The record gives the reactivity of an RNA of 177 nucleotides to DMS and 2A3. The RNA was probed in 150 mM KOAc, 10 mM MgCl2 and 150 mM bicine (pH 8.5) at 24 C.
[RMDB]
RNA sequence: GGGAACGACUCGAGUAGAGUCGAAAAGAUGCUAGAUAUGGACGAUUUCCUCAUGUUCAACGUUGAAAUAAGCUCGGAAACGAGCUUAUGGAGUUGACAUGAGGUAGUCGUCCUAAGUCAAACGGGAGUUAUAUACUUGCUUCGGCAAGUAUAUAACAAAAGAAACAACAACAACAAC
Reactivity to DMS in 0.01 (KOAc 150mM, MgCl2 10mM, bicine 150mM(pH8.5), 24C), signal-to-noise 6, nucleotides 027 to 126: g010a180u010g020c050u000a140g000a050u010a300u010g000g010a020c000g000a020u000u000u000c000c010u000c000a010u000g000u010u000c000a000a010c000g020u000u020g000a120a130a000u000a000a000g010c000u000c000g010g000a100a080a260c000g010a020g010c000u000u000a000u000g000g000a040g030u000u000g000a020c000a000u000g010a000g010g020u000a000g010u000c000g000u000c000c000u000a010a060g010u000c030a050a120a130c100g010g010g010a300
Reactivity to 2A3 in 0.01 (KOAc 150mM, MgCl2 10mM, bicine 150mM(pH8.5), 24C), signal-to-noise 4, nucleotides 027 to 126: g100a030u300g130c150u110a040g020a140u080a080u230g000g000a000c020g000a000u010u050u030c010c000u000c000a010u020g110u220u120c010a020a000c020g270u300u060g010a010a020a010u000a000a010g000c000u000c000g030g000a060a100a060c000g010a010g000c010u010u010a000u000g000g000a020g000u010u020g010a000c000a000u000g000a000g010g000u000a000g000u000c000g000u000c000c000u000a010a010g000u000c050a060a050a120c120g140g090g100a240
For 2A3, 11,354 sequencing reads were counted. For DMS the reverse transcriptase was MarathonRT. It was measured as part of the RMDB library TTRDES. 2A3 adducts were read by reverse transcription with SuperScript II with manganese.